[RMDB]
Description
Chemical mapping of a 207-nucleotide RNA with 2A3 and DMS. For 2A3 the reverse transcriptase was SuperScript II with manganese. The reactions ran in a buffer of 150 mM KOAc, 10 mM MgCl2 and 150 mM bicine (pH 8.5), at 24 C. The data come from the RNA Mapping Database (RMDB), library OK3TST. For 2A3, 2,245 sequencing reads were counted.
RNA sequence: GGGAACGACUCGAGUAGAGUCGAAAAGCUAUGUGAUGACGGUGUGACUUGCCAUCGUUAUAGGUACUCGACUAUAUCACAUAGGUCGAGUUGUUGUCCGUACUGGCAAGUCACAGUACGACAUGUGUCGAGUACCACAUGUGACAACACUCAGGAACGUAUCUUGCUAGUUCGCUAGCAAGAUACGAAAAGAAACAACAACAACAAC
Reactivity to 2A3 in 0.01 (KOAc 150mM, MgCl2 10mM, bicine 150mM(pH8.5), 24C), signal-to-noise 4, nucleotides 027 to 156: g040c000u000a000u010g010u000g000a000u010g060a050c130g020g120u100g000u000g010a010c000u000u010g000c000c000a070u120c120g120u130u140a100u110a140g040g000u000a000c000u000c000g000a000c020u090a020u010a000u300c000a000c000a010u000a010g020g030u080c020g000a020g000u050u070g010u000u030g020u040c020c050g010u030a080c120u080g000g000c000a000a010g010u010c000a000c000a000g000u040a010c030g050a050c000a060u180g060u020g000u050c000g010a010g010u020a030c060c050a020c030a030u180g080u120g080a030c000a040a000c010a050c060u060c030a020g080g050a080a040
Reactivity to DMS in 0.01 (KOAc 150mM, MgCl2 10mM, bicine 150mM(pH8.5), 24C), signal-to-noise 1, nucleotides 027 to 156: g020c000u000a010u000g020u000g020a000u000g000a130c120g040g030u020g000u010g000a020c010u000u000g000c040c000a080u030c080g010u010u060a090u000a090g000g020u000a020c000u000c020g010a030c010u000a100u000a110u000c020a070c010a090u000a010g000g000u000c100g010a110g000u000u090g010u000u010g000u000c000c090g060u000a080c030u010g030g030c000a000a020g000u000c030a030c000a020g000u020a090c040g000a150c060a120u000g020u020g000u000c030g000a020g000u000a000c000c020a180c110a100u000g010u000g000a020c070a070a130c010a060c030u000c070a100g000g020a150a180